[RMDB]
RNA sequence: GGGAACGACUCGAGUAGAGUCGAAAAAGUCAGAGGGCGCUACCAUGCAAACUAGGGCUGGCUACUCUUGCACAGAAUCACAUCUCGAUAAUUGUCAGUGCAAGAAGGACAAUUUUACCAUUUAAUGAAAACGUUUACCUGUUCGCAGGUAAACGAACUCGUCUAUUUCCUUCGGGAAAUAGACGAGAAAAGAAACAACAACAACAAC
Reactivity to 2A3 in 0.01 (KOAc 150mM, MgCl2 10mM, bicine 150mM(pH8.5), 24C), signal-to-noise 2, nucleotides 027 to 156: a010g000u010c010a000g010a010g030g020g020c000g000c030u110a250c040c050a090u190g010c000a000a070a060c050u060a030g000g070g050c000u010g010g000c010u060a070c010u040c000u010u070g010c020a020c000a000g220a090a070u160c050a030c030a170u010c070u040c000g090a060u020a140a040u090u070g050u030c040a030g030u020g000c000a020a000g000a010a020g010g020a020c000a040a020u000u010u090u090a140c080c060a170u110u090u100a130a190u140g100a040a010a000a050c000g010u030u000u000a000c000c000u000g010u000u060c170g070c050a000g000g000u000a000a000a000c000g000a000a000

An RNA of 207 nucleotides, treated with 2A3 and read out base by base. The data come from the RNA Mapping Database (RMDB), library M2RFOK. The reactions ran in a buffer of 150 mM KOAc, 10 mM MgCl2 and 150 mM bicine (pH 8.5), at 24 C.